[RMDB]
RNA sequence: GGGAACGACUCGAGUAGAGUCGAAAAGAUUAUGUGGGAGAGGCGCCCUUUCGUUUCCUCGGAUAAUUAAUUGCCAGUCGCUGGCUUUAGCGAUAUUGAUGUCAUCUGUAGCGAUGACUAUGCUACCUUAAGGUAUGAUCCGGAUACCCCCGGUAAACGUAGGCAGUAUAUUCGUAUACUGCCUACGAAAAGAAACAACAACAACAAC
Reactivity to 2A3 in 0.01 (KOAc 150mM, MgCl2 10mM, bicine 150mM(pH8.5), 24C), signal-to-noise 3, nucleotides 027 to 156: g010a020u080u030a030u140g290u090g010g000g030a160g010a030g040g000c010g020c040c050c050u050u110u070c030g000u000u020u010c000c000u020c030g000g010a000u020a070a020u120u120a060a100u140u170g000c010c010a030g040u030c000g000c040u010g040g000c070u100u100u090a000g000c000g010a010u010a090u100u190g090a070u110g010u010c000a020u000c030u090g270u230a050g050c050g050a020u000g000a000c000u030a070u090g020c010u010a040c030c000u080u180a090a060g040g000u020a040u110g040a050u060c010c000g000g000a030u080a100c000c010c000c010c030g000g000u060a050a030a000
Reactivity to DMS in 0.01 (KOAc 150mM, MgCl2 10mM, bicine 150mM(pH8.5), 24C), signal-to-noise 2, nucleotides 027 to 156: g010a100u010u000a020u000g000u010g000g000g030a140g010a090g000g030c030g040c150c040c040u000u010u000c040g010u000u000u000c010c000u000c050g000g020a090u000a060a140u000u000a090a100u010u000g000c060c020a130g020u000c020g000c020u000g010g060c060u000u000u000a040g020c040g030a050u000a110u010u000g010a170u000g000u010c010a010u030c020u000g040u000a150g020c140g010a010u010g000a040c020u000a040u010g030c010u010a040c030c010u000u000a060a060g010g020u000a080u030g000a080u000c020c010g000g020a150u000a230c010c010c010c040c040g010g020u000a040a050a120